[RMDB]
Chemical mapping of a 177-nucleotide RNA with 2A3 and DMS. The RNA was probed in 150 mM KOAc, 10 mM MgCl2 and 150 mM bicine (pH 8.5) at 24 C.
RNA sequence: GGGAACGACUCGAGUAGAGUCGAAAAGAUAUGGACUCCCCACCGCAUGAACUACUUCGAAGUAUCGGAAACGAUAUCAAGAAGCAUGCGAGGUCCUAAGUCAAAGCCCGUCCUUCGGGACGGGCAAUCAUUUCUGAAAGUUCGCUUUCAGAAAUGAAAAAGAAACAACAACAACAAC
Reactivity to 2A3 in 0.01 (KOAc 150mM, MgCl2 10mM, bicine 150mM(pH8.5), 24C), signal-to-noise 1, nucleotides 027 to 126: g010a010u110a140u240g010g030a000c010u130c000c050c020c010a040c000c030g050c010a000u030g030a160a070c060u200a010c010u300u030c010g060a210a030g040u010a020u000c000g000g010a000a070a050c010g000a010u000a000u080c000a010a070g000a000a030g000c010a010u020g000c000g000a030g000g000u020c000c000u050a170a020g050u100c050a030a090a050g030c030c020c070g000u010c000c020u040u110c300g070g010g010a000c000g000g000g000c040a000a010
Reactivity to DMS in 0.01 (KOAc 150mM, MgCl2 10mM, bicine 150mM(pH8.5), 24C), signal-to-noise 3, nucleotides 027 to 126: g000a070u000a170u000g000g000a030c000u020c060c010c020c060a300c100c000g000c000a000u000g000a030a040c060u000a300c010u000u010c000g000a270a300g000u000a000u000c000g000g000a130a060a210c020g000a000u000a000u000c000a050a300g000a010a010g000c010a000u000g020c010g010a160g020g000u000c000c000u000a060a100g000u000c060a110a150a100g010c030c000c020g010u000c000c000u000u020c200g020g010g000a000c010g010g000g000c010a000a020

The 2A3 profile rests on 1,204 reads. DMS adducts were read by reverse transcription with MarathonRT. It was measured as part of the RMDB library TTRDEL.